[RMDB]
RNA sequence: GGGAACGACUCGAGUAGAGUCGAAAAGAAAGAAGGGUGAUUCCGGUGAGAUAUGUUUGAUAUUCUUGGUUGUUAAAUUUUAUAUUAUCACCCAGGAAUCAAACAUAUUAUUACUGUGGUCAUCAAAAAAUAAGUCCAAAUUCGUUUGGACUUAUUUAAAAGAAACAACAACAACAAC
Reactivity to DMS in 0.01 (KOAc 150mM, MgCl2 10mM, bicine 150mM(pH8.5), 24C), signal-to-noise 4, nucleotides 027 to 126: g000a130a100a110g000a150a110g000g000g010u010g010a010u000u030c070c010g000g010u000g000a010g000a010u000a000u000g000u000u010u000g000a040u010a090u020u000c000u000u000g000g010u000u000g000u010u000a020a030a110u010u040u030u030a110u050a080u040u000a020u010c000a010c040c000c010a010g010g010a010a010u000c000a000a010a010c000a000u000a010u010u010a070u010u000a010c010u000g010u010g010g000u010c010a000u000c000a000a010a080
Reactivity to 2A3 in 0.01 (KOAc 150mM, MgCl2 10mM, bicine 150mM(pH8.5), 24C), signal-to-noise 5, nucleotides 027 to 126: g110a020a090a010g140a040a080g130g000g000u020g010a010u280u080c020c010g000g000u000g000a020g000a000u010a000u000g010u000u010u010g020a030u050a180u100u040c000u010u010g020g000u000u060g010u030u010a040a050a130u120u170u080u060a170u070a060u100u010a010u030c000a000c000c000c000a000g000g000a010a000u000c000a000a000a000c000a000u000a000u000u010a100u000u010a010c010u010g060u110g040g000u000c000a010u010c000a000a130a040